[RMDB]
RNA sequence: GGGAACGACUCGAGUAGAGUCGAAAAGACACAGAAGAUAUAGGCGCGCCUAUAUCAAUGCGCGCGCACCGAGACGAUAAGAAUAAAAGAAAUAAGAAUACAGAACUAAGACAUAAAGACAAGACAAGUAUAUGUAAUAGUUCGCUAUUAUAUAUACAAAAGAAACAACAACAACAAC
Reactivity to 2A3 in 0.01 (KOAc 150mM, MgCl2 10mM, bicine 150mM(pH8.5), 24C), signal-to-noise 6, nucleotides 027 to 126: g040a000c030a010c060a120g150a170a020g030a090u100a030u040a140g100g000c010g000c020g020c030c000u050a050u020a020u180c050a050a040u060g000c020g000c010g000c030g010c010a020c010c020g060a060g030a050c060g020a050u080a160a030g080a110a070u190a100a100a040a010g180a020a090a020u140a060a050g030a050a020u090a070c000a020g020a060a000c030u040a060a010g040a020c010a020u160a110a130a000g060a050c040a070a040g050a040c030a170a060
Reactivity to DMS in 0.01 (KOAc 150mM, MgCl2 10mM, bicine 150mM(pH8.5), 24C), signal-to-noise 5, nucleotides 027 to 126: g000a110c100a090c050a060g000a070a100g000a040u010a030u000a060g010g000c020g010c210g000c000c020u010a040u030a080u020c160a080a040u000g010c120g000c050g010c020g020c030a070c080c040g000a080g010a080c070g020a100u010a040a100g000a100a040u030a040a050a090a060g000a060a030a050u040a040a060g000a080a070u010a040c080a060g020a050a070c070u000a030a040g010a040c040a030u010a060a100a050g000a070c130a070a090g000a080c190a060a130